This 207-nucleotide RNA was probed chemically with DMS and 2A3. The data come from the RNA Mapping Database (RMDB), library RNAMAK.
RNA sequence: GGGAACGACUCGAGUAGAGUCGAAAACUUAGAGGUUCGCCUCUAAGAAAAAAGAUAUGGAUCCCACCAGGGAGCUCGUACUCGGAAACGAGUACCGAGCGAAGAACUGGUAAAGAGUGGGAUCCUAAGUCAAAAAAACGUCAGUUCGCUGACGUAAGAAUACAUCUCUAUUCGUAGAGAUGUAUUCAAAAGAAACAACAACAACAAC
Reactivity to DMS in 0.01 (KOAc 150mM, MgCl2 10mM, bicine 150mM(pH8.5), 24C), signal-to-noise 1, nucleotides 027 to 156: c020u000u010a040g000a030g030g020u000u010c300g030c030c000u000c000u000a000a040g000a020a110a090a080a170a130g000a080u000a120u000g020g000a000u000c000c000c010a080c020c000a210g010g030g000a090g050c000u000c000g030u000a010c020u020c000g010g020a090a060a140c010g000a080g010u000a010c040c100g010a010g010c010g010a100a100g000a200a150c060u000g030g010u000a060a050a100g000a140g050u000g000g020g000a020u000c000c010u000a000a030g020u000c010a000a020a100a140a020a120a060c020g000u010c000a040g010u000u010c300g060c000u000g000a000c000g010u000a020a180
Reactivity to 2A3 in 0.01 (KOAc 150mM, MgCl2 10mM, bicine 150mM(pH8.5), 24C), signal-to-noise 2, nucleotides 027 to 156: c010u000u000a000g000a000g040g020u080u080c180g080c040c010u000c010u010a000a010g010a080a110a000a010a010a000g000a000u000a000u040g000g000a000u010c030c010c000a010c020c010a000g000g000g020a050g000c010u000c000g000u000a000c000u000c000g000g010a000a010a000c000g000a010g000u010a010c020c070g020a000g000c000g020a000a010g010a000a010c000u000g020g010u110a050a160a020g190a040g110u250g000g020g000a000u000c000c000u000a000a010g010u000c010a050a090a050a000a030a020a070c000g030u010c000a020g000u050u090c150g000c150u000g010a020c000g000u010a000a050
Conditions: 150 mM KOAc, 10 mM MgCl2 and 150 mM bicine (pH 8.5), 24 C. In probing experiments dimethyl sulfate is read out at A N1 and C N3, which are open when not base-paired.